[RMDB]
RNA sequence: GGGAACGACUCGAGUAGAGUCGAAAAGAUAUGGAGAACUACUCGCCUCGGAUAGCUCCCGCUCGGAAACGAGCGAGGAGUGCGGAGUGCGAGCUCCUAAGUCAAAACGAGUGCUUCGGCACUCGAAGGAAAGGUACAUGUUCGCAUGUACCUUUCCAAAAGAAACAACAACAACAAC
Reactivity to DMS in 0.01 (KOAc 150mM, MgCl2 10mM, bicine 150mM(pH8.5), 24C), signal-to-noise 2, nucleotides 027 to 126: g010a050u000a300u010g000g010a030g020a070a050c030u010a300c000u000c000g010c010c010u000c000g010g000a090u000a180g010c000u010c000c000c010g020c000u000c000g000g020a070a080a190c000g000a010g000c010g000a070g030g010a000g030u000g010c130g020g000a030g000u000g010c010g010a010g000c000u000c000c000u000a050a220g010u000c040a070a060a130a110c040g000a030g020u000g020c010u010u030c180g000g020c000a020c000u010c010g000a050a050
Reactivity to 2A3 in 0.01 (KOAc 150mM, MgCl2 10mM, bicine 150mM(pH8.5), 24C), signal-to-noise 2, nucleotides 027 to 126: g010a020u090a050u170g020g060a000g000a060a050c070u140a030c000u300c010g000c000c020u000c090g210g020a210u150a110g000c010u000c010c000c000g030c000u020c000g000g000a090a120a060c010g010a000g000c010g000a130g000g000a010g000u050g010c080g200g020a020g020u300g020c030g020a010g010c030u000c000c000u000a150a000g040u080c020a000a040a060a140c000g050a020g020u020g030c020u100u130c300g090g000c020a000c010u030c000g000a010a010